[RMDB]
RNA sequence: GGGAACGACUCGAGUAGAGUCGAAAAAAUCGGCAGACUUGGCACUGGCGUCGGGGUUUAAUUUUUUAGUCGGCCCCAACGGCAGUGGUAAAACCAGUGUGUUGGAGGCGAUUUAUACCCUGGGUCAUAGAAGACUAUCAUUCGUGAUAGUCUUCUAAAAAGAAACAACAACAACAAC
Reactivity to DMS in 0.01 (KOAc 150mM, MgCl2 10mM, bicine 150mM(pH8.5), 24C), signal-to-noise 4, nucleotides 027 to 126: a060a050u000c010g010g000c020a060g000a040c020u010u010g030g020c010a030c020u000g000g010c020g020u000c030g010g000g000g020u000u000u010a050a010u000u010u010u020u020u010a090g010u010c230g000g000c010c000c000c000a020a000c000g010g000c000a010g010u000g000g010u000a040a060a110a300c010c000a030g010u000g010u010g010u000u000g010g010a070g010g000c020g010a020u000u000u010a110u000a070c010c000c000u000g020g010g010u000c050a180
Reactivity to 2A3 in 0.01 (KOAc 150mM, MgCl2 10mM, bicine 150mM(pH8.5), 24C), signal-to-noise 2, nucleotides 027 to 126: a000a000u070c010g010g070c060a040g030a070c020u100u140g070g030c030a010c030u090g120g040c090g060u020c030g000g000g010g020u030u110u170a090a080u100u140u050u070u070u250a090g060u080c060g080g050c010c020c030c000a010a000c010g060g000c010a010g030u000g000g020u060a010a060a000a010c000c000a020g030u060g020u010g010u040u070g100g080a120g030g040c030g010a000u000u110u010a150u050a000c010c000c040u060g120g000g020u050c010a000
This 177-nucleotide RNA was probed chemically with DMS and 2A3.
For 2A3 the reverse transcriptase was SuperScript II with manganese.
Source: RMDB library OK2TST, as collected in RNAgym.